[RMDB]
RNA sequence: GGGAACGACUCGAGUAGAGUCGAAAAAUAAUCUAGUGCAAAUAUUGUCUUAAUUACUUAGGCUAAAAGAAAUAAGUAUUAAAGCGGGACAAGGCAUCGACAUUUGAUACAAAUAUUGAUCAAUGGAACAAGAAACACUACUUCGGUAGUGUUUCAAUCCUUAUACUGGAUUCGUCCAGUAUAAGGAAAAAGAAACAACAACAACAAC
Reactivity to DMS in 0.01 (KOAc 150mM, MgCl2 10mM, bicine 150mM(pH8.5), 24C), signal-to-noise 2, nucleotides 027 to 156: a090u000a050a110u000c030u010a070g020u000g010c010a100a100a160u010a100u010u020g010u000c010u010u010a050a130u000u010a030c010u010u010a030g020g000c060u000a060a080a120a170g020a120a090a100u000a000a110g010u000a030u010u000a050a080a070g020c070g030g020g030a040c040a010a030g000g030c090a080u000c010g020a100c000a040u010u010u000g000a080u000a100c060a040a050a070u010a110u000u000g010a030u000c060a070a070u000g010g000a090a110c140a060a210g020a010a020a030c000a000c010u000a000c030u010u000c300g030g020u010a030g010u010g000u000u010u000c010a040a130
Reactivity to 2A3 in 0.01 (KOAc 150mM, MgCl2 10mM, bicine 150mM(pH8.5), 24C), signal-to-noise 2, nucleotides 027 to 156: a000u080a000a040u050c070u130a040g030u000g060c010a010a100a250u070a100u120u030g010u030c020u020u120a130a140u110u050a060c020u060u040a020g030g060c020u110a070a040a080a120g030a010a110a010u070a060a000g030u000a050u060u100a090a100a050g050c110g070g000g000a020c020a030a010g030g000c040a080u060c030g030a030c010a030u050u050u140g020a020u070a110c080a010a090a010u170a100u220u200g020a020u000c000a000a030u060g050g020a080a030c050a130a090g020a000a000a020c030a000c000u030a000c010u040u050c140g010g000u000a010g000u010g000u000u000u010c000a000a000